[RMDB]
RNA sequence: GGGAACGACUCGAGUAGAGUCGAAAACGGAUCUUGCUUACUGCGUGAGUAUCUCCGACUCUGCGUAAUUAGGAAAGUGUCUCAUGCAGCUGACCUCUGUUGCCACAGAAAUUAUAUACGCAAAGUGGACGGAUGCUAAUUUCGAUUAGCAUCCGUCAAAAGAAACAACAACAACAAC
Reactivity to 2A3 in 0.01 (KOAc 150mM, MgCl2 10mM, bicine 150mM(pH8.5), 24C), signal-to-noise 2, nucleotides 027 to 126: c030g050g000a060u040c040u070u100g000c020u030u090a100c030u060g000c030g060u030g000a000g000u030a050u030c040u000c010c010g100a090c020u030c060u070g060c040g060u070a090a120u120u060a040g000g070a130a010a010g060u040g070u030c000u000c010a040u050g000c030a040g000c050u080g070a150c000c010u000c000u030g010u030u110g010c020c010a070c030a050g120a010a020a000u180u120a060u090a020u000a110c010g020c040a060a080a060g050u080g170
Reactivity to DMS in 0.01 (KOAc 150mM, MgCl2 10mM, bicine 150mM(pH8.5), 24C), signal-to-noise 2, nucleotides 027 to 126: c150g000g000a050u000c020u020u000g000c070u000u010a170c050u000g000c060g060u020g020a020g010u000a070u000c040u000c030c000g000a140c150u000c000u000g010c070g000u000a020a140u020u000a220g000g020a050a070a130g020u010g000u000c000u000c050a010u000g000c030a010g000c110u040g000a110c010c100u040c020u000g020u000u000g000c090c080a130c160a030g020a090a080a080u020u000a030u020a140u020a000c070g010c080a040a090a090g000u000g000